[RMDB]
RNA sequence: GGGAACGACUCGAGUAGAGUCGAAAAAUUGGCUCAAACAUUCUUCGCAGAAGCGGACGUGGCUCUUCAAGCCGGCGCGACCGGAGCGCGAUCGUUUACUCGGCGAAGACGUGGCAGAAAAGCUCGCCUCCUUCGAAGUUUUCGAACUUCGAAGGAGAAAAGAAACAACAACAACAAC
Reactivity to DMS in 0.01 (KOAc 150mM, MgCl2 10mM, bicine 150mM(pH8.5), 24C), signal-to-noise 1, nucleotides 027 to 126: a070u010u010g010g000c010u000c030a150a110a130c090a080u010u000c000u000u000c010g040c030a050g000a020a040g020c020g010g020a010c040g010u000g020g040c030u020c050u010u000c180a090a180g020c040c060g000g040c070g010c080g000a110c130c120g000g020a080g000c010g010c000g000a030u010c000g000u000u040u020a090c130u000c040g020g040c000g010a030a010g010a020c230g030u010g010g020c100a080g010a020a080a130a080g000c040u000c150g000c170
Structure probing data (DMS) for a 177-nucleotide construct.
Source: RMDB library OK2TRN, as collected in RNAgym.
The DMS profile rests on 882 reads.
Conditions: 150 mM KOAc, 10 mM MgCl2 and 150 mM bicine (pH 8.5), 24 C.